[RMDB]
RNA sequence: GGGAACGACUCGAGUAGAGUCGAAAACCAAGCCCGAGCAUGGGCCCCAGUUCCGAACGAAGAGACCGCCGGGGAAGGGGGGCGAACCGACGGGAGUUCAAUGGUAAAGAGGCGAAGAACCUCGGAGUAAGGAUGUGCUUCGGCACAUCCAAAAGAAACAACAACAACAAC
Reactivity to 2A3 in 0.01 (KOAc 150mM, MgCl2 10mM, bicine 150mM(pH8.5), 24C), signal-to-noise 3, nucleotides 027 to 129: c010c000a000a000g010c020c040c010g010a030g100c050a090u150g000g000g000c010c000c000c000a000g010u060u050c010c020g020a030a020c040g000a060a080g030a000g000a030c000c050g020c030c030g020g000g010g020a000a010g010g000g000g000g000g000c020g030a050a030c000c000g010a000c010g020g000g000a030g000u010u020c030a100a100u130g000g010u030a050a000a030g050a020g000g020c040g020a030a040g020a050a040c000c000u000c020g000g010a030g010u090a080a050
Reactivity to DMS in 0.01 (KOAc 150mM, MgCl2 10mM, bicine 150mM(pH8.5), 24C), signal-to-noise 3, nucleotides 027 to 129: c040c030a050a030g030c060c020c000g010a090g040c000a080u040g050g000g040c040c030c000c000a110g010u000u020c020c030g020a060a180c100g030a090a110g020a180g020a080c110c110g000c030c050g000g000g000g000a120a050g040g040g000g000g000g060c100g000a050a000c020c020g040a060c190g030g020g000a060g030u030u010c120a040a090u040g000g040u030a020a180a080g010a050g000g000c000g010a090a000g010a000a000c030c020u010c050g010g000a060g030u020a090a180
The record gives the reactivity of an RNA of 170 nucleotides to 2A3 and DMS. For 2A3 the reverse transcriptase was SuperScript II with manganese. It was measured as part of the RMDB library 15KLIB. The 2A3 profile rests on 5,163 reads. For DMS, 7,832 sequencing reads were counted.